Overview
Structure probing data (DMS) for a 177-nucleotide construct. Source: RMDB library OK2TRN, as collected in RNAgym. The RNA was probed in 150 mM KOAc, 10 mM MgCl2 and 150 mM bicine (pH 8.5) at 24 C.

RNA sequence: GGGAACGACUCGAGUAGAGUCGAAAAUGAAAUGGCGGUUGAAGCCACCGACAUCGGCCAUCGACUGCUGAACUUGGUGGACAAGGCUUCGCAGCUGGACGGCGAAAUCCUCGAUCUUCAAAAGGCGAAAGCUUCCUGUUUUCGAACAGGAAGCUUUAAAAGAAACAACAACAACAAC
Reactivity to DMS in 0.01 (KOAc 150mM, MgCl2 10mM, bicine 150mM(pH8.5), 24C), signal-to-noise 2, nucleotides 027 to 126: u010g000a060a140a080u010g010g020c000g000g020u000u000g010a080a140g000c010c020a050c030c000g020a020c130a110u000c050g050g020c010c040a100u000c060g010a050c060u000g000c010u000g000a050a230c120u000u010g000g000u000g000g000a110c060a010a090g010g030c100u000u000c090g000c020a020g000c040u010g000g010a040c070g010g010c010g010a040a060a100u000c040c010u000c080g000a050u020c050u000u000c080a060a100a090a070g000g030c060g010